Annotation:
This 207-nucleotide RNA was probed chemically with 2A3. 2A3 is a SHAPE reagent: it acylates the 2'-hydroxyl of flexible nucleotides of all four kinds. The reactions ran in a buffer of 150 mM KOAc, 10 mM MgCl2 and 150 mM bicine (pH 8.5), at 24 C.

RNA sequence: GGGAACGACUCGAGUAGAGUCGAAAAUGACCUCUGGCGAGAGGAGAACGGCUGUGAGUGCACCAAGGCCGUGAACUUUGCCAUGCAUGAACUUCAGCUCAUCCGGGUGGAGAAGCAGUACCUUCACCACAACCUCGACCACCUGGUCGAGGAGCUCUAUCUUCCUCGCUUUCGAGCGAGGAAGAUAAAAAGAAACAACAACAACAAC
Reactivity to 2A3 in 0.01 (KOAc 150mM, MgCl2 10mM, bicine 150mM(pH8.5), 24C), signal-to-noise 1, nucleotides 027 to 156: u070g050a080c000c000u000c010u040g020g010c040g030a130g030a040g110g010a010g080a010a000c080g000g010c020u000g080u110g090a050g050u100g100c030a110c060c000a170a060g080g020c030c010g000u010g000a100a020c060u020u040u050g020c000c030a020u040g020c010a040u110g050a100a050c020u070u020c020a070g010c000u000c040a140u110c070c100g130g000g000u000g020g010a030g000a070a030g000c040a020g040u010a070c000c000u000u020c040a010c020c000a100c070a080a130c010c000u000c030g010a000c000c010a080c090c110u260g000g010u000c000g000a000g000g000a000g000c010u030c000